[RMDB]
RNA sequence: GGGAACGACUCGAGUAGAGUCGAAAAGAGGAUACGAACAGCUUCGUGCUUUCGAUAGCUUCGUAGCGGCGGCUACGUCCCCUAGGGGAGCCGCCUCCCCUGCUAUCGGCGCGAGGGGAGUAUCCGAAUCGCUAGUAAUAUUCGUAUUACUAGCGAUAAAAGAAACAACAACAACAAC
Reactivity to 2A3 in 0.01 (KOAc 150mM, MgCl2 10mM, bicine 150mM(pH8.5), 24C), signal-to-noise 9, nucleotides 027 to 126: g170a040g010g000a000u010a010c020g070a230a040c050a090g150c030u030u020c010g010u010g010c020u120u170u210c030g010a010u010a010g000c010u070u080c070g050u080a030g020c030g040g000c010g010g000c020u090a080c110g220u100c010c010c000c020u110a140g010g010g010g010a000g010c020c010g010c010c000u020c000c000c000c000u010g000c000u000a010u020c010g020g000c010g000c000g010a010g000g010g010g010a040g000u000a000u000c000c000g000a010
Reactivity to DMS in 0.01 (KOAc 150mM, MgCl2 10mM, bicine 150mM(pH8.5), 24C), signal-to-noise 9, nucleotides 027 to 126: g000a260g010g010a020u010a010c010g010a190a180c260a130g000c030u000u000c020g010u000g010c040u000u010u010c060g010a020u000a000g000c010u000u010c050g010u010a080g010c110g000g010c050g010g000c020u000a080c170g010u010c010c010c010c060u010a170g030g010g000g010a070g000c030c050g010c040c000u000c010c020c010c010u010g010c000u000a020u000c020g000g010c020g010c010g000a020g000g000g000g010a300g010u000a010u000c000c000g010a110